[RMDB]
RNA sequence: GGGAACGACUCGAGUAGAGUCGAAAAGAUAUGGAAUCCGUUGACUAAGAGAUGUAGACAUGAUGGAGUAUCGGAAACGAUAUGACAUCAACAGCUAUUGUCUCUUAGUCAACGGAUUCCUAAGUCACCACUUAUUUUAGUUCGCUAAAAUAAGUGGAAAAGAAACAACAACAACAAC
Reactivity to DMS in 0.01 (KOAc 150mM, MgCl2 10mM, bicine 150mM(pH8.5), 24C), signal-to-noise 8, nucleotides 027 to 126: g010a040u010a300u020g000g000a010a010u000c000c000g010u000u010g000a020c000u000a000a020g000a020g020a020u000g010u010a010g000a080c110a280u000g010a010u000g000g000a300g000u000a000u000c000g020g010a130a110a250c000g010a010u000a000u000g000a300c000a020u000c000a010a060c300a110g010c000u000a010u000u020g040u000c010u000c000u000u000a010g000u000c000a000a000c000g000g010a000u000u000c000c000u000a010a070g000u000c060a280